Structure probing data (2A3 and DMS) for a 177-nucleotide construct. Conditions: 150 mM KOAc, 10 mM MgCl2 and 150 mM bicine (pH 8.5), 24 C. DMS adducts were read by reverse transcription with MarathonRT. High 2A3 reactivity points to a flexible backbone, as in loops and unpaired stretches. For 2A3, 10,004 sequencing reads were counted. It was measured as part of the RMDB library TTRDES.
RNA sequence: GGGAACGACUCGAGUAGAGUCGAAAAGAUAUGGACCAUCCUUUGACAUGGCUGCGUCUCGGAAACGAGACGCAGCCAACAGCAAAGGGAUGGUCCUAAGUCAAAGGUGUUUACUUCGGUAAACACCGAUAUGGGUAAGGUUCGCCUUACCCAUAUCAAAAGAAACAACAACAACAAC
Reactivity to 2A3 in 0.01 (KOAc 150mM, MgCl2 10mM, bicine 150mM(pH8.5), 24C), signal-to-noise 2, nucleotides 027 to 126: g010a010u030a010u100g000g000a000c000c000a000u010c000c020u020u020u030g140a160c150a290u300g040g010c020u030g000c000g030u010c020u010c000g050g020a000a040a020c030g030a020g000a000c010g010c000a000g010c020c010a030a020c040a010g060c020a010a000a000g030g000g000a000u000g000g010u000c000c000u010a000a000g000u000c010a040a140a170g000g000u000g010u010u010u000a000c010u020u090c270g110g000u010a010a000a000c000a000c000c000
Reactivity to DMS in 0.01 (KOAc 150mM, MgCl2 10mM, bicine 150mM(pH8.5), 24C), signal-to-noise 6, nucleotides 027 to 126: g000a020u000a240u010g010g000a010c000c000a010u000c000c000u000u000u000g010a170c190a210u010g020g030c000u000g020c010g050u000c000u000c000g020g000a040a040a140c000g020a020g020a020c000g040c000a000g010c000c000a000a020c180a080g010c130a040a010a020g000g000g000a010u000g000g010u000c000c000u000a000a050g010u000c020a110a120a170g010g010u000g000u000u000u000a010c000u000u020c220g010g010u000a000a010a000c000a000c000c000